RNA sequence: GGGAACGACUCGAGUAGAGUCGAAAACGACCCCCUGACGGGUCGGACAUAGCGUCAGGAUCAUCCGUGGCAGUCACCACGGUAAUCAUGUGGCUGAUGAUGGUUUUCCAUCUUAAUCUGACUGUGUCGUAGCAGUCUACAGUACUAUGACAUUAGAACCUAUCCUGAUGUUCGCAUCAGGAUAGGUAAAAGAAACAACAACAACAAC
Reactivity to DMS in 0.01 (KOAc 150mM, MgCl2 10mM, bicine 150mM(pH8.5), 24C), signal-to-noise 1, nucleotides 027 to 156: c010g010a060c010c010c030c010c000u000g000a090c010g000g000g100u000c000g000g000a150c110a110u000a090g000c100g020u000c040a040g020g000a050u030c040a020u000c000c020g090u020g000g050c000a190g030u000c160a300c040c000a000c020g000g020u000a000a030u000c010a100u010g040u000g000g000c010u000g040a120u010g010a060u000g030g030u000u000u000u000c000c020a050u010c030u000u010a080a230u000c100u010g010a200c080u000g010u000g010u000c020g060u010a020g010c000a040g000u000c070u000a070c100a060g050u020a000c000u000a010u000g010a000c000a040u010u000a090g000a220
Reactivity to 2A3 in 0.01 (KOAc 150mM, MgCl2 10mM, bicine 150mM(pH8.5), 24C), signal-to-noise 3, nucleotides 027 to 156: c010g050a000c000c000c030c000c020u000g010a010c000g000g050g000u050c050g040g040a050c040a130u160a040g120c010g010u000c000a010g010g000a060u140c030a050u020c010c010g010u000g030g000c020a000g020u020c000a000c010c000a000c000g020g010u030a010a030u050c030a020u060g000u010g040g000c030u000g010a050u090g000a010u020g010g060u120u170u210u160c010c010a010u000c000u030u060a160a130u060c060u080g010a010c000u000g000u000g000u050c050g010u020a010g030c000a000g030u020c070u060a050c020a000g060u020a050c010u000a020u020g010a020c030a080u120u180a090g060a080

The record gives the reactivity of an RNA of 207 nucleotides to DMS and 2A3. Reactivities are given for positions 27 through 156. The reactions ran in a buffer of 150 mM KOAc, 10 mM MgCl2 and 150 mM bicine (pH 8.5), at 24 C. For DMS, 2,322 sequencing reads were counted.